[RMDB]
RNA sequence: GGGAACGACUCGAGUAGAGUCGAAAAGAUAUGGACGUUUCUCGAUUCCAUGUUUACGUAUGAGCGCUGUAUCGGAAACGAUACACGCUGGUACGUAAACAUGGACAGGAUUGACACGUCCUAAGUCGGUUUGAUAUGCGUUCGCGCAUAUCAAACCAAAAGAAACAACAACAACAAC
Reactivity to 2A3 in 0.01 (KOAc 150mM, MgCl2 10mM, bicine 150mM(pH8.5), 24C), signal-to-noise 1, nucleotides 027 to 126: g170a050u300a110u300g000g030a000c000g000u050u050u000c030u020c060g170a300u250u090c020c030a020u000g000u020u000u000a000c030g030u040a020u020g300a070g010c120g120c300u000g030u010a020u030c030g030g050a030a050a040c010g000a010u000a000c000a000c000g000c070u010g100g050u000a000c000g000u010a000a000a000c000a010u000g000g000a010c010a000g000g100a300u060u220g060a030c020a000c030g000u000c000c000u030a190a010g270u120c100

Record summary:
An RNA of 177 nucleotides, treated with 2A3 and read out base by base. Values cover nucleotides 27 to 126. 2A3 adducts were read by reverse transcription with SuperScript II with manganese. Conditions: 150 mM KOAc, 10 mM MgCl2 and 150 mM bicine (pH 8.5), 24 C.